Structure probing data (DMS and 2A3) for a 177-nucleotide construct. The reactions ran in a buffer of 150 mM KOAc, 10 mM MgCl2 and 150 mM bicine (pH 8.5), at 24 C. Reactivities are given for positions 27 through 126. The DMS profile rests on 13,094 reads. The data come from the RNA Mapping Database (RMDB), library OK1LIB. DMS adducts were read by reverse transcription with MarathonRT.
RNA sequence: GGGAACGACUCGAGUAGAGUCGAAAACGCAUGCGUACUCGUGACGGUGCGGCUUCGUUGGUUUGGGUCUGUCGCGGUUGGCCCUGUCUGACGGGUCAGGGCCUGUUCAGGCAGGUUUGUGAGUGCGGGAGCAUGAUGGGUUCGCCUAUCAUGCUCCAAAAGAAACAACAACAACAAC
Reactivity to DMS in 0.01 (KOAc 150mM, MgCl2 10mM, bicine 150mM(pH8.5), 24C), signal-to-noise 3, nucleotides 027 to 126: c030g020c030a020u020g010c010g020u010a030c010u030c160g000u030g020a050c050g000g010u000g000c020g000g000c070u000u010c060g040u010u010g010g030u020u010u010g000g010g010u010c040u010g020u030c010g020c040g010g010u000u000g000g000c120c000c000u000g000u010c010u000g000a050c050g010g010g020u000c060a110g000g010g000c000c000u010g000u030u000c020a030g010g000c010a010g010g000u010u020u020g010u010g010a060g010u010g000c100g010
Reactivity to 2A3 in 0.01 (KOAc 150mM, MgCl2 10mM, bicine 150mM(pH8.5), 24C), signal-to-noise 3, nucleotides 027 to 126: c000g060c020a030u160g010c010g020u030a030c010u010c040g120u140g070a010c000g020g000u040g030c000g030g000c030u050u080c020g060u020u090g050g040u040u040u070g020g000g030u000c010u010g000u000c020g010c000g040g010u010u050g030g020c020c000c000u010g000u020c010u010g020a000c020g050g020g000u030c070a110g070g200g010c000c000u010g000u060u010c000a000g000g000c020a010g010g000u010u010u030g020u020g020a030g010u060g000c030g010